This 177-nucleotide RNA was probed chemically with DMS and 2A3. Values cover nucleotides 27 to 126. Source: RMDB library OK2TST, as collected in RNAgym. The 2A3 profile rests on 32,193 reads.

RNA sequence: GGGAACGACUCGAGUAGAGUCGAAAAGCGGAUGUGUCCAAGGGCAUCCACAUCUCGGCGUAUUCGUAUGCUUCGAUGGCCAAGGCGCUGCUGCCGAUCAUGAACCCCGGAGGUUCCAUCGUCGGCACACCUUUAACUUUUUCGAAAGUUAAAGGUGAAAAGAAACAACAACAACAAC
Reactivity to DMS in 0.01 (KOAc 150mM, MgCl2 10mM, bicine 150mM(pH8.5), 24C), signal-to-noise 9, nucleotides 027 to 126: g020c060g010g000a030u000g010u000g010u010c060c090a100a190g020g000g000c020a030u000c030c040a130c040a040u000c030u000c100g000g010c020g020u000a030u000u010c150g020u000a040u000g000c020u000u000c120g010a050u000g010g000c020c040a090a140g010g010c140g010c080u000g010c110u000g000c010c010g000a020u000c290a070u000g000a030a020c010c010c040c220g010g000a180g020g000u000u000c070c160a040u000c140g010u000c010g000g000c020a120
Reactivity to 2A3 in 0.01 (KOAc 150mM, MgCl2 10mM, bicine 150mM(pH8.5), 24C), signal-to-noise 9, nucleotides 027 to 126: g070c040g010g040a060u050g040u020g040u080c050c030a100a090g050g030g000c010a030u030c050c000a010c010a030u030c040u020c030g020g000c020g010u040a060u040u070c140g020u060a020u090g010c010u040u050c030g040a050u050g040g000c020c010a050a060g060g000c070g000c050u100g010c020u030g010c000c000g000a020u050c020a030u060g010a010a010c010c020c020c130g300g030a290g100g020u010u000c070c010a020u020c030g010u000c010g010g000c010a000
Notes
For DMS the reverse transcriptase was MarathonRT.